[RMDB]
This 177-nucleotide RNA was probed chemically with DMS. Conditions: 150 mM KOAc, 10 mM MgCl2 and 150 mM bicine (pH 8.5), 24 C. It was measured as part of the RMDB library M2PK50.
RNA sequence: GGGAACGACUCGAGUAGAGUCGAAAACAGCCCGUCUUCGGACGGGCUGAAACCGGAAGCCGAAGCCGAACGGCAAGCCGAACCGGAACGGGAACGGCAAAAAAACCAUAAUGUUCGCAUUAUGGAACUGUGAGUAGUAGUUCGCUACUACUCACAGAAAAGAAACAACAACAACAAC
Reactivity to DMS in 0.01 (KOAc 150mM, MgCl2 10mM, bicine 150mM(pH8.5), 24C), signal-to-noise 2, nucleotides 027 to 126: c020a000g000c000c010c000g020u000c000u000u000c170g010g010a020c000g000g000g000c000u000g000a000a080a180c010c010g000g020a070a170g000c000c000g000a050a190g030c060c020g000a080a110c030g000g000c020a120a070g010c030c090g000a080a160c030c010g010g000a110a080c080g000g000g040a060a160c030g040g000c010a000a000a020a050a030a060a060c000c000a000u000a000a000u000g010u000u000c150g000c000a020u000u000a000u000g000g010a060a080